[RMDB]
RNA sequence: GGGAACGACUCGAGUAGAGUCGAAAAAAAUAAACACACCGGAGUCGGAGGAGUCCUGCCGCAGAGCAACUAUAAAAAGGACACCCUGCAACCGUGUGUACCGGAGUCUCUAUCGGUGUCAGCCAGCAGCUUACAAAGUCAGACGCAUUUGUGUGUAUGAUAUUUAGGUGUUCGCACCUAAAUAUCAAAAAGAAACAACAACAACAAC
Reactivity to 2A3 in 0.01 (KOAc 150mM, MgCl2 10mM, bicine 150mM(pH8.5), 24C), signal-to-noise 1, nucleotides 027 to 156: a010a010a010u130a010a050a000c030a000c000a000c030c190g000g010a020g070u160c080g040g040a140g030g020a030g010u020c020c020u010g080c020c070g130c130a050g030a060g060c010a020a030c060u150a070u240a280a040a110a000a000g000g030a000c000a020c000c000c000u030g020c020a060a140c020c010g000u010g000u010g020u030a040c010c070g000g050a080g020u000c060u000c010u040a080u090c020g000g000u000g020u030c040a020g020c010c000a010g060c010a000g000c020u020u090a030c100a110a090a000g010u040c010a010g030a120c040g040c100a060u020u100u090g010u030g000u010g010u000a020
Reactivity to DMS in 0.01 (KOAc 150mM, MgCl2 10mM, bicine 150mM(pH8.5), 24C), signal-to-noise 1, nucleotides 027 to 156: a050a050a120u020a050a050a110c020a070c010a030c000c150g060g020a300g060u000c020g040g000a110g030g020a160g000u000c000c020u000g020c090c030g000c110a100g000a100g000c030a120a090c140u010a140u000a030a060a030a100a030g010g010a060c040a120c020c000c020u000g020c050a130a160c010c030g030u000g000u000g020u000a030c040c020g000g020a130g030u000c030u030c020u000a020u010c030g060g010u000g030u000c020a090g030c050c020a040g050c030a060g060c020u000u010a080c020a100a050a170g000u020c020a050g000a140c050g000c060a100u000u030u030g000u000g020u000g000u000a160